[RMDB]
RNA sequence: GGGAACGACUCGAGUAGAGUCGAAAAAGCGCCAGUAAACGGCGGGGGUAACUAUAACCCUCUUAAGGUAGCGAAAUGCCUUGUCGGACAAGUACCGACCUGCAUGAAUGGUAGAACGAGGUCCCCAGAUUGUGGUCCAUUUCGAUGGACCACAAUCAAAAGAAACAACAACAACAAC
Reactivity to DMS in 0.01 (KOAc 150mM, MgCl2 10mM, bicine 150mM(pH8.5), 24C), signal-to-noise 2, nucleotides 027 to 126: a110g000c060g040c010c010a090g010u040a150a160a140c050g030g020c120g000g000g010g030g000u040a120a130c170u020a070u000a240a040c050c020c050u030c010u010u040a070a010g000g030u000a050g100c130g030a060a090a050u030g000c000c080u000u000g030u000c020g020g000a050c130a070a120g020u000a100c030c000g000a050c010c050u010g000c020a090u040g010a110a130u040g000g030u000a030g000a070a090c090g000a080g010g000u000c010c000c000c220a090
Reactivity to 2A3 in 0.01 (KOAc 150mM, MgCl2 10mM, bicine 150mM(pH8.5), 24C), signal-to-noise 2, nucleotides 027 to 126: a000g060c050g020c020c010a050g060u160a000a200a020c020g050g000c000g000g020g000g000g000u050a060a000c050u000a060u160a300a140c000c000c000u000c000u010u100a040a010g010g020u000a000g050c060g210a090a080a130u070g010c020c020u000u020g000u000c000g000g050a110c150a150a010g030u040a070c000c000g000a020c000c000u020g000c000a010u060g150a040a020u070g030g050u060a050g050a140a010c060g020a010g030g030u080c020c010c010c000a010